[RMDB]
RNA sequence: GGGAACGACUCGAGUAGAGUCGAAAAUCACAGCUUGUCGACGAGGUAGACCGAAUCGCAAGCCAGGCCCAGUUUAACGGCAUGAACUUGCUCACGGGCCGCUUCUCCCGCGAGUCUGCCCUUGGGCCCUCCACUACGUCUUCGGACGUAGUGGAGGAAAAGAAACAACAACAACAAC
Reactivity to 2A3 in 0.01 (KOAc 150mM, MgCl2 10mM, bicine 150mM(pH8.5), 24C), signal-to-noise 3, nucleotides 027 to 126: u100c020a010c030a100g010c010u070u070g120u300c070g000a020c010g010a010g060g060u150a050g120a300c010c010g010a010a030u000c000g000c000a000a010g000c010c000a020g030g000c010c000c000a040g030u020u090u150a150a030c060g010g000c000a020u060g060a140a070c100u080u080g000c000u040c040a080c050g000g030g020c020c020g010c030u140u070c040u000c020c010c000g000c040g010a010g020u010c040u030g000c000c000c000u060u060g030g010g040c030
Reactivity to DMS in 0.01 (KOAc 150mM, MgCl2 10mM, bicine 150mM(pH8.5), 24C), signal-to-noise 1, nucleotides 027 to 126: u000c160a050c000a140g000c000u000u000g000u160c030g060a020c050g020a300g000g040u000a130g000a020c010c000g040a120a100u000c020g000c050a000a050g000c010c050a120g000g050c000c050c010a090g000u050u120u040a050a080c300g040g000c030a000u010g030a200a090c200u000u000g000c030u000c160a010c050g040g000g000c050c000g020c130u070u050c000u060c000c000c080g000c110g080a030g000u000c000u000g000c030c000c140u080u000g000g010g030c160